The record gives the reactivity of an RNA of 207 nucleotides to 2A3. Source: RMDB library RNAMAK, as collected in RNAgym.
[RMDB]
RNA sequence: GGGAACGACUCGAGUAGAGUCGAAAAGAACGUUUCGACGUUCCAACAGGGGUCCCUGCGACGAAGCGUGGAGAGGCGAGGAUCCUGAAGCCUCCACGGGGGAGCCUCCCACGCAGAGCAGGGACGGAGGCACCCCACCGCGCUACUUCGGUAGCAAAACUACGCCAUAGUUCGCUAUGGCGUAGUUAAAAGAAACAACAACAACAAC
Reactivity to 2A3 in 0.01 (KOAc 150mM, MgCl2 10mM, bicine 150mM(pH8.5), 24C), signal-to-noise 2, nucleotides 027 to 156: g000a010a000c000g010u070u110u290c300g120a010c020g000u010u000c050c010a140a080c060a180g020g010g030g030u010c000c000c020u000g020c020g160a230c060g050a220a030g000c030g010u060g000g060a300g000a000g090g000c000g000a120g040g140a160u060c000c000u000g070a060a000g010c000c020u040c050c020a030c020g000g000g000g000g000a030g000c030c000u020c000c000c000a000c000g000c000a000g000a000g000c010a000g000g040g020a010c010g010g000a010g000g000c000a000c000c020c010c020a010c000c040g080c010g000c020u000a000c000u050u090c240g180g000u010a000g000c000a020a160